[RMDB]
Source information:
The record gives the reactivity of an RNA of 177 nucleotides to DMS and 2A3. For DMS, 953 sequencing reads were counted. The reactions ran in a buffer of 150 mM KOAc, 10 mM MgCl2 and 150 mM bicine (pH 8.5), at 24 C. Values cover nucleotides 27 to 126. It was measured as part of the RMDB library OK1LIB.
RNA sequence: GGGAACGACUCGAGUAGAGUCGAAAAACGUCGACAACUAUUUUUAAAGCGAUGAUUGCAAUUAAGACAGGAAAUCCAAUCAUUUUUGCAUUCCAUCCAAGUGCACAAGAAUCGUCGAAGCGUGCAGAUGUUAUCGGCGGUUCGCCGCCGAUAACAUAAAAGAAACAACAACAACAAC
Reactivity to DMS in 0.01 (KOAc 150mM, MgCl2 10mM, bicine 150mM(pH8.5), 24C), signal-to-noise 1, nucleotides 027 to 126: a080c050g000u000c000g000a180c100a210a040c070u000a000u030u000u000u090u120a080a020a150g050c150g020a030u000g000a000u000u000g000c000a000a080u000u000a100a050g120a040c270a140g000g030a100a140a210u000c110c060a180a110u000c120a030u030u000u000u000u000g000c000a000u000u080c050c030a020u000c000c140a160a050g020u000g000c010a020c090a080a070g000a050a000u000c120g000u000c000g000a010a000g030c070g020u000g000c140a030g000
Reactivity to 2A3 in 0.01 (KOAc 150mM, MgCl2 10mM, bicine 150mM(pH8.5), 24C), signal-to-noise 3, nucleotides 027 to 126: a000c070g090u120c000g040a060c040a190a050c020u110a170u180u110u000u120u200a180a170a030g080c080g050a010u010g010a000u000u030g000c000a000a020u070u030a190a000g100a110c070a120g180g000a250a050a030u110c040c020a000a040u040c070a080u010u000u060u100u010g050c020a020u080u050c080c000a040u000c000c000a020a120g070u080g220c020a020c000a070a040g070a120a140u080c050g020u020c030g040a040a090g080c010g020u020g000c040a080g000